[RMDB]
RNA sequence: GGGAACGACUCGAGUAGAGUCGAAAAGUUUGGUUAGAAUACAUUAAGGUUCAAGAAAAAUCAGCAAACGCUGAGUCCCUAUUAUGUGGAAGGUAUCAUUCAGCUGACAAAGAAAUAUAAGACAUGAUGCAUGAAUCAAGGGAUGUACAAUCAUGGCGUAUGGAAUGGGAUUCGUCCCAUUCCAUACAAAAGAAACAACAACAACAAC
Reactivity to DMS in 0.01 (KOAc 150mM, MgCl2 10mM, bicine 150mM(pH8.5), 24C), signal-to-noise 3, nucleotides 027 to 156: g000u000u010u000g010g010u000u000a080g030a150a140u000a080c030a080u000u020a130a090g020g030u000u000c040a090a170g000a030a090a080a110a120u000c010a020g020c000a130a120a190c110g040c030u010g010a040g010u010c030c010c000u000a130u010u000a070u010g010u000g030g010a110a110g010g010u000a060u000c040a100u000u010c050a160g010c020u010g000a170c070a030a070a070g010a080a060a090u000a080u010a050a090g000a050c040a000u020g000a040u010g000c050a100u000g010a100a030u000c090a060a110g020g020g000a060u020g010u000a040c050a100a060u000c030a050u000g010g000c120
Reactivity to 2A3 in 0.01 (KOAc 150mM, MgCl2 10mM, bicine 150mM(pH8.5), 24C), signal-to-noise 4, nucleotides 027 to 156: g020u050u080u070g050g000u030u070a070g040a170a070u100a130c080a070u120u160a090a060g040g000u040u080c070a060a050g110a020a130a040a030a020u040c020a010g000c050a160a090a170c120g000c010u020g010a010g030u030c000c000c000u050a120u280u050a060u200g090u050g040g040a030a020g040g010u060a040u080c010a040u120u060c030a020g010c020u020g030a060c080a030a110a010g100a050a120a000u190a040u050a070a090g040a010c030a020u060g010a020u040g030c040a040u050g070a050a030u050c060a030a020g020g020g020a010u020g040u050a030c050a040a030u090c050a070u140g060g020c040
Source information
This 207-nucleotide RNA was probed chemically with DMS and 2A3. Values cover nucleotides 27 to 156. The DMS profile rests on 4,315 reads. 2A3 adducts were read by reverse transcription with SuperScript II with manganese.